This 177-nucleotide RNA was probed chemically with DMS and 2A3.
Values cover nucleotides 27 to 126.
The reactions ran in a buffer of 150 mM KOAc, 10 mM MgCl2 and 150 mM bicine (pH 8.5), at 24 C.
The 2A3 profile rests on 152,990 reads.
2A3 adducts were read by reverse transcription with SuperScript II with manganese.
RNA sequence: GGGAACGACUCGAGUAGAGUCGAAAAGCUAGCCAGCGCACGAUGAGACUGCCGUGACGUCUAGCCUGCGUCUCAAUUAGUCUCCAUCAAUCAAAACGCUGGGAUUGAUGUACGAGACUAGUACACAGUGAUUGCACUUCUUCGGAGGUGUAAUCACAAAAGAAACAACAACAACAAC
Reactivity to DMS in 0.01 (KOAc 150mM, MgCl2 10mM, bicine 150mM(pH8.5), 24C), signal-to-noise 9, nucleotides 027 to 126: g010c020u000a080g010c070c020a040g010c040g020c040a050c060g010a090u030g000a090g020a080c080u020g020c110c050g010u010g000a060c040g000u020c020u010a080g000c030c040u000g010c050g000u000c010u010c020a110a070u020u010a000g000u000c000u000c030c030a010u000c010a020a030u000c040a060a070a090a120c120g010c090u010g000g010g000a020u000u000g000a010u000g000u030a070c130g000a020g020a020c020u000a030g010u020a080c170a090c210a120
Reactivity to 2A3 in 0.01 (KOAc 150mM, MgCl2 10mM, bicine 150mM(pH8.5), 24C), signal-to-noise 9, nucleotides 027 to 126: g020c020u030a010g030c010c030a030g010c020g010c030a020c040g050a040u140g030a040g060a100c080u110g080c070c010g030u040g040a140c020g030u060c020u020a020g010c010c010u050g030c030g060u000c000u000c000a020a080u030u020a000g000u000c000u000c010c000a000u000c000a000a010u010c020a010a060a070a120c120g040c120u120g060g020g000a000u000u020g000a010u010g020u060a060c080g000a000g010a030c010u010a010g030u060a030c110a020c030a080